Record summary
Structure probing data (DMS) for a 177-nucleotide construct. Reactivities are rounded to 0.1 and cut off at 0 and 3. The DMS profile rests on 689 reads. The RNA was probed in 150 mM KOAc, 10 mM MgCl2 and 150 mM bicine (pH 8.5) at 24 C. It was measured as part of the RMDB library OK2TRN. For DMS the reverse transcriptase was MarathonRT.
[RMDB]
RNA sequence: GGGAACGACUCGAGUAGAGUCGAAAAAGUGGUGAAUCGGCUCUGGGACACCAUGCAGAACGCCCUCAUCAACAUCGUCACCAUCAUGCUGGGCCUCGCCGUGGGUUCGAAGAUGGAGGCCGACAAGUGCUCCUAGAGGAUUCGUCCUCUAGGAGCAAAAAGAAACAACAACAACAAC
Reactivity to DMS in 0.01 (KOAc 150mM, MgCl2 10mM, bicine 150mM(pH8.5), 24C), signal-to-noise 1, nucleotides 027 to 126: a140g030u000g000g000u000g030a040a120u020c030g000g000c110u010c050u000g050g020g010a300c050a080c050c050a030u000g010c100a030g000a060a110c080g000c040c000c010u000c050a080u000c040a030a050c120a090u010c120g000u000c000a070c000c000a000u000c040a050u000g040c150u040g010g000g000c040c010u000c040g000c040c150g040u010g000g010g000u000u000c000g000a190a090g010a070u000g040g000a020g040g000c000c030g000a060c240a050a080g010